RNA sequence: GGGAACGACUCGAGUAGAGUCGAAAAUUCGGUACUCAACCCCACCUACAGCCUUAGAUACGUUGUAGUCGAGGAACUCAAUGUUUUUAACACGGGUAGGGAAUGAGAAGUGAGUAGGACGGGCUGAACUAGAGAAAGAAGUAAGCUUCAGAGUCUGAUGAUUAGUGAUGUUCGCAUCACUAAUCAUAAAAGAAACAACAACAACAAC
Reactivity to DMS in 0.01 (KOAc 150mM, MgCl2 10mM, bicine 150mM(pH8.5), 24C), signal-to-noise 2, nucleotides 027 to 156: u000u000c000g010g020u010a110c080u000c030a070a300c000c000c000c010a120c020c010u000a080c020a140g040c050c030u000u000a070g010a070u000a040c050g040u000u000g000u010a060g020u010c030g040a170g020g020a060a070c030u000c020a070a020u010g020u010u010u000u000u020a010a050c060a080c020g030g020g090u000a020g000g020g000a050a090u030g010a070g010a080a090g010u020g000a090g010u000a040g010g010a040c060g020g010g030c030u000g000a020a140c070u010a110g010a240g020a080a040a100g010a070a050g040u000a070a090g010c020u000u000c040a100g000a110g030u000c020u000g000
Reactivity to 2A3 in 0.01 (KOAc 150mM, MgCl2 10mM, bicine 150mM(pH8.5), 24C), signal-to-noise 5, nucleotides 027 to 156: u090u050c040g010g040u060a050c010u020c040a030a060c020c010c010c010a030c010c020u040a050c050a070g070c000c040u050u050a030g010a050u060a070c020g020u010u010g090u170a020g000u030c090g100a160g050g160a100a020c010u000c020a030a030u060g040u030u050u010u050u120a090a030c080a030c060g030g000g030u050a060g050g030g000a060a140u120g020a020g010a100a050g050u060g050a050g020u050a040g040g020a000c040g030g010g000c020u020g010a050a040c040u050a040g020a020g070a120a140a020g030a050a010g000u090a070a000g030c000u080u060c060a040g020a040g100u020c050u100g030
About this RNA
Structure probing data (DMS and 2A3) for a 207-nucleotide construct. Source: RMDB library OK3TST, as collected in RNAgym. 2A3 adducts were read by reverse transcription with SuperScript II with manganese. Conditions: 150 mM KOAc, 10 mM MgCl2 and 150 mM bicine (pH 8.5), 24 C.